[RMDB]
Structure probing data (2A3 and DMS) for a 177-nucleotide construct. The 2A3 profile rests on 2,063 reads.
RNA sequence: GGGAACGACUCGAGUAGAGUCGAAAAGAUAUGGAACCGGCUUCGAGGUACAGGAAGUCGGAAACGACGCUGUACUACCCACCGAAGCGGUUCCUAAGUCAAAGUUGAAACGUUCGCGUUUCAACAACCCUACCCUAAUCUUCGGAUUAGGGUAGGGAAAAGAAACAACAACAACAAC
Reactivity to 2A3 in 0.01 (KOAc 150mM, MgCl2 10mM, bicine 150mM(pH8.5), 24C), signal-to-noise 2, nucleotides 027 to 126: g000a000u060a030u120g010g020a000a040c000c000g300g050c110u010u010c000g070a100g070g070u010a000c020a000g080g300a300a040g040u000c000g000g000a000a000a000c000g000a000c000g000c210u000g010u000a000c000u030a030c060c030c070a090c020c080g010a010a000g000c000g020g000u000u010c000c000u000a010a000g010u000c060a160a100a100g000u010u010g010a020a000a000c020g040u110u130c300g040c000g170u010u030u020c010a000a010c000a010a010
Reactivity to DMS in 0.01 (KOAc 150mM, MgCl2 10mM, bicine 150mM(pH8.5), 24C), signal-to-noise 2, nucleotides 027 to 126: g000a030u010a300u010g030g010a000a000c000c000g030g020c000u000u000c000g010a120g020g000u000a000c000a010g010g040a100a180g030u010c000g000g010a010a040a060c000g010a030c030g010c010u000g000u010a000c020u000a070c080c060c120a300c190c000g010a000a030g010c010g000g000u010u000c010c000u010a010a030g010u000c020a110a140a160g010u000u010g000a000a000a010c010g010u000u020c180g010c030g020u000u000u000c000a010a020c000a030a100